[RMDB]
RNA sequence: GGGAACGACUCGAGUAGAGUCGAAAAGAGAUUUUCAGUUUUUCAAAGGUUGGAAGACAUCAUUUGAUGAAAUGGCUCCACACACGGAUGAUCAUGUAUGCAAAGUUGAUAUCGACAAUGAACAGUGGCUCACAAUACGGUUCGCCGUAUUGUGAGCAAAAGAAACAACAACAACAAC
Reactivity to DMS in 0.01 (KOAc 150mM, MgCl2 10mM, bicine 150mM(pH8.5), 24C), signal-to-noise 2, nucleotides 027 to 126: g000a110g020a080u000u000u000u030c090a110g010u010u000u000u000u000c030a090a120a090g000g010u010u010g020g010a120a070g000a090c070a030u000c030a070u000u000u000g010a050u010g020a100a070a050u000g040g010c010u010c010c030a000c180a060c300a070c150g000g000a040u000g000a080u000c020a020u000g020u010a110u000g000c020a030a030a090g010u010u000g010a040u010a030u010c020g000a100c100a030a100u000g000a080a080c130a070g010u000g020